[RMDB]
The record gives the reactivity of an RNA of 207 nucleotides to DMS and 2A3. The data come from the RNA Mapping Database (RMDB), library OK3TST. For DMS, 1,869 sequencing reads were counted. For DMS the reverse transcriptase was MarathonRT.
RNA sequence: GGGAACGACUCGAGUAGAGUCGAAAAUAACACAGUGCCUAGCACAUAAUAGGCUCUCAUUAAAUAUUGCUGAACAGCCAGCAGUAAUGGAAUGUUGAGUAACUGAUGGUACAAAUGACUCAAUAAAAUAUUAUGUAUCUAUCAAAAAUGAUCAUUAAAUGCACUACUGUUUCGACAGUAGUGCAUUAAAAGAAACAACAACAACAAC
Reactivity to DMS in 0.01 (KOAc 150mM, MgCl2 10mM, bicine 150mM(pH8.5), 24C), signal-to-noise 2, nucleotides 027 to 156: u000a080a110c080a160c100a060g020u030g000c000c020u030a050g030c110a110c090a060u010a040a160u000a100g000g050c000u000c090u030c050a170u000u000a140a100a130u000a020u000u000g030c000u030g000a080a170c080a240g030c050c040a080g030c000a070g030u000a000a170u000g030g010a110a090u000g000u010u050g030a110g000u000a080a080c080u010g030a080u000g030g000u010a030c020a040a060a060u000g010a080c010u000c020a080a070u000a050a090a040a110u020a190u000u010a090u020g000u000a020u010c010u000a260u030c020a040a020a100a100a200u020g000a180u000c050a100u000u000a070
Reactivity to 2A3 in 0.01 (KOAc 150mM, MgCl2 10mM, bicine 150mM(pH8.5), 24C), signal-to-noise 2, nucleotides 027 to 156: u130a070a030c040a010c000a130g040u030g030c000c010u080a040g090c050a040c010a130u250a150a100u100a100g000g000c000u000c000u000c010a050u020u150a070a010a030u120a020u020u000g000c020u030g040a160a000c010a170g090c040c000a000g000c020a000g020u010a010a140u030g020g140a080a020u040g010u030u100g010a020g020u020a030a060c020u030g020a020u020g050g040u000a020c020a010a080a050u040g010a030c020u040c050a000a040u170a190a110a030a010u230a030u170u000a060u090g000u030a010u020c020u060a030u020c010a040a040a000a110a080u100g000a030u090c040a010u110u120a030